Record summary:
Conditions: 150 mM KOAc, 10 mM MgCl2 and 150 mM bicine (pH 8.5), 24 C. An RNA of 177 nucleotides, treated with DMS and 2A3 and read out base by base. Reactivities are given for positions 27 through 126. For DMS the reverse transcriptase was MarathonRT. It was measured as part of the RMDB library OK1LIB. For 2A3 the reverse transcriptase was SuperScript II with manganese.
RNA sequence: GGGAACGACUCGAGUAGAGUCGAAAAGAAGAGAGUCGACGCAAGCGACGAUAACUGCGGAACGGUAACCGUAGUACCGUAAGGUCAUGGCACGCGAAAGCGAAAGAACGAAACAUGCCAUAAGAGAACUAGUACGCAUGUUCGCAUGCGUACUAGUAAAAGAAACAACAACAACAAC
Reactivity to DMS in 0.01 (KOAc 150mM, MgCl2 10mM, bicine 150mM(pH8.5), 24C), signal-to-noise 4, nucleotides 027 to 126: g000a100a070g010a090g010a200g010u010c000g010a130c070g000c140a080a150g000c030g040a050c030g010a020u010a070a040c050u000g000c040g000g000a140a070c120g000g000u060a060a070c000c020g000u010a040g010u000a060c040c020g010u070a060a080g010g030u030c130a010u000g000g000c020a110c010g010c030g010a080a080a100g010c000g000a090a040a080g010a100a120c130g020a100a120a120c110a100u020g000c010c020a010u030a090a050g030a170g010a090
Reactivity to 2A3 in 0.01 (KOAc 150mM, MgCl2 10mM, bicine 150mM(pH8.5), 24C), signal-to-noise 3, nucleotides 027 to 126: g090a040a000g080a000g030a020g000u030c030g000a120c020g020c090a120a010g060c010g000a030c050g010a020u050a070a050c010u040g010c010g010g010a100a040c020g040g090u170a050a050c020c030g030u040a000g060u020a070c000c000g020u060a060a050g000g000u080c030a030u020g000g020c000a000c080g020c000g040a090a050a000g010c020g040a120a040a010g100a100a030c060g050a000a000a100c040a050u080g010c020c000a000u030a070a010g090a000g000a020
The 2A3 profile rests on 3,668 reads.